[RMDB]
RNA sequence: GGGAACGACUCGAGUAGAGUCGAAAAGUGCCAGAGAAGUUGUAUAUUGGGCUACCAUCCAGUGAUGCAAUGGAGGCUUAGUAGGGUUGUCAGUUUUCCACAGGGUAGCAAUUAAAACUGUCUGAAAAAAACGAAACCACCUUCGGGUGGUUUCGAAGAAUAUACGUUUCUUCGGAAACGUAUAUUCAAAAGAAACAACAACAACAAC
Reactivity to 2A3 in 0.01 (KOAc 150mM, MgCl2 10mM, bicine 150mM(pH8.5), 24C), signal-to-noise 1, nucleotides 027 to 156: g030u030g000c020c010a060g040a000g030a300a000g000u040u040g030u110a100u040a050u130u100g040g010g000c010u060a050c010c010a020u140c020c010a050g030u070g130a080u090g000c010a060a020u060g000g040a030g030g000c030u090u080a040g030u070a050g200g000g000u010u010g020u010c000a000g000u030u010u300u070c000c010a050c010a030g000g000g040u000a000g030c030a020a030u170u170a030a000a010a010c000u020g020u020c000u010g000a080a100a000a000a000a010a000c000g000a000a000a000c000c000a010c000c030u030u060c110g060g000g000u000g000g000u000u000u000c000g000a000a000
Reactivity to DMS in 0.01 (KOAc 150mM, MgCl2 10mM, bicine 150mM(pH8.5), 24C), signal-to-noise 2, nucleotides 027 to 156: g050u000g020c030c020a170g000a170g020a130a150g010u000u010g010u010a090u010a060u010u000g020g010g000c020u000a090c040c030a120u020c050c010a080g040u000g040a120u000g010c040a060a060u000g010g010a260g020g000c010u000u010a080g000u020a060g040g000g010u010u000g050u000c010a040g000u010u000u000u000c000c020a070c060a260g000g020g040u000a030g000c020a060a150u000u000a020a050a060a030c010u000g020u000c030u000g000a000a000a090a040a140a090a260c020g000a050a000a010c010c000a050c000c010u010u000c300g140g040g110u000g000g010u000u000u000c000g010a010a070